[RMDB]
RNA sequence: GGGAACGACUCGAGUAGAGUCGAAAAGAUAUGGAUUAAAUCAAGGCUGGAGAUCCCUGGACGCACUAUAUCGGAAACGAUAUAAACGUCCCUGGAUCGUUGAAAGCCUUGAUUUAAUCCUAAGUCACCAAUUUAAAGAGUUCGCUCUUUAAAUUGGAAAAGAAACAACAACAACAAC
Reactivity to DMS in 0.01 (KOAc 150mM, MgCl2 10mM, bicine 150mM(pH8.5), 24C), signal-to-noise 2, nucleotides 027 to 126: g010a050u020a300u010g000g010a000u000u000a000a010a010u000c000a020a000g030g020c000u000g000g000a110g020a000u000c010c000c030u000g000g020a010c000g010c100a100c220u010a020u000a000u000c010g010g000a160a090a230c010g020a000u000a000u010a000a110a250c020g010u000c000c010c030u000g000g010a010u000c030g000u000u020g010a190a210a060g010c000c000u000u000g000a000u000u000u000a000a000u000c000c000u000a030a070g020u000c060a300

This 177-nucleotide RNA was probed chemically with DMS. Conditions: 150 mM KOAc, 10 mM MgCl2 and 150 mM bicine (pH 8.5), 24 C. Reactivities are given for positions 27 through 126. For DMS the reverse transcriptase was MarathonRT.